This 177-nucleotide RNA was probed chemically with DMS and 2A3.
RNA sequence: GGGAACGACUCGAGUAGAGUCGAAAAGAACAGGAUAACAGGACGCAAGAUAGGAAGUUCGGAUGAAUAGAGAAGAGCCGUAACUCGAGAACAACGGCAGCGUCCUGAAGAAUUUACGGCUCGAGAAGACCGUAUCAUCCUUCGGGAUGAUACGGUCAAAAGAAACAACAACAACAAC
Reactivity to DMS in 0.01 (KOAc 150mM, MgCl2 10mM, bicine 150mM(pH8.5), 24C), signal-to-noise 2, nucleotides 027 to 126: g000a140a300c040a150g000g000a100u030a030a150c000a000g000g000a000c000g270c000a100a060g000a100u070a130g010g030a060a300g000u000u000c000g020g000a070u050g000a010a100u070a080g010a130g000a080a110g000a030g000c050c010g000u000a010a050c210u000c000g000a100g030a210a030c100a000a300c110g000g080c160a100g030c010g000u000c000c010u020g000a170a030g030a130a060u030u000u000a130c030g000g010c020u000c090g000a020g020a060a030
Reactivity to 2A3 in 0.01 (KOAc 150mM, MgCl2 10mM, bicine 150mM(pH8.5), 24C), signal-to-noise 2, nucleotides 027 to 126: g140a000a020c110a010g080g000a100u020a250a040c000a000g000g000a030c000g000c000a000a210g030a300u190a230g040g130a020a000g020u060u000c010g010g000a100u120g190a070a220u240a040g090a000g090a300a000g000a000g000c000c000g000u000a000a000c090u030c050g140a300g040a190a000c020a000a010c000g030g000c000a000g000c000g000u000c000c000u000g000a000a000g120a020a020u000u000u050a000c000g000g000c040u000c000g020a060g020a070a000
For DMS the reverse transcriptase was MarathonRT. Reactivities are given for positions 27 through 126. Conditions: 150 mM KOAc, 10 mM MgCl2 and 150 mM bicine (pH 8.5), 24 C. It was measured as part of the RMDB library OK1LIB. For 2A3 the reverse transcriptase was SuperScript II with manganese.